[RMDB]
RNA sequence: GGGAACGACUCGAGUAGAGUCGAAAAGAAAACAUGCAAACAUGCAGGUGGCCACCCGCCCGGGCCACCGUUACUCCACUCCACUCCUUCGGGACUGGUUUGGAGGAACAUAACAGGGCAAAAAAAAUCAGACCAUAUAGUUCGCUAUAUGGUCUGAAAAAGAAACAACAACAACAAC
Reactivity to DMS in 0.01 (KOAc 150mM, MgCl2 10mM, bicine 150mM(pH8.5), 24C), signal-to-noise 1, nucleotides 027 to 126: g000a160a060a010a110c110a040u000g010c110a110a270a180c140a110u000g000c030a050g040g000u000g000g000c000c000a020c120c060c270g000c000c000c000g000g000g000c000c000a010c040c040g010u000u000a010c000u000c010c000a010c010u000c000c010a000c170u000c000c000u010u010c150g030g000g000a010c060u010g000g000u000u010u000g020g020a010g000g000a040a000c040a110u000a100a080c170a030g020g000g050c000a010a000a000a000a070a010a080a030